The data come from the RNA Mapping Database (RMDB), library OK3TST.
Chemical mapping of a 207-nucleotide RNA with 2A3.
For 2A3, 1,407 sequencing reads were counted.
[RMDB]
RNA sequence: GGGAACGACUCGAGUAGAGUCGAAAAGAUCAUGAGCAUCAACCUGGGUAAUCACGCGAUGACGCUCAGUCGCAAGCCGUGGUGAGAAGUAUACUGAUUCGAUAUCUAAUCUGAACGUAUAUCCAUACUCCCGAUGACAUGUCUCUGUCUCCUCGCCGAUUCGCGUUACUUUCGAGUAACGCGAAUCAAAAGAAACAACAACAACAAC
Reactivity to 2A3 in 0.01 (KOAc 150mM, MgCl2 10mM, bicine 150mM(pH8.5), 24C), signal-to-noise 3, nucleotides 027 to 156: g030a020u070c030a020u040g030a020g090c010a030u020c010a020a100c010c060u080g000g000g000u060a080a020u060c020a030c080g070c070g090a140u150g030a060c020g010c120u170c140a040g090u130c020g000c080a050a040g040c050c040g040u000g020g040u090g020a020g010a080a030g000u000a010u010a030c060u100g070a300u010u020c010g020a000u020a130u120c090u180a160a110u040c080u080g000a000a000c010g010u000a020u010a000u040c050c020a040u040a120c040u060c000c030c020g010a010u010g000a010c020a010u020g020u040c050u040c010u070g050u020c000u030c050c000u020c000g100c040c060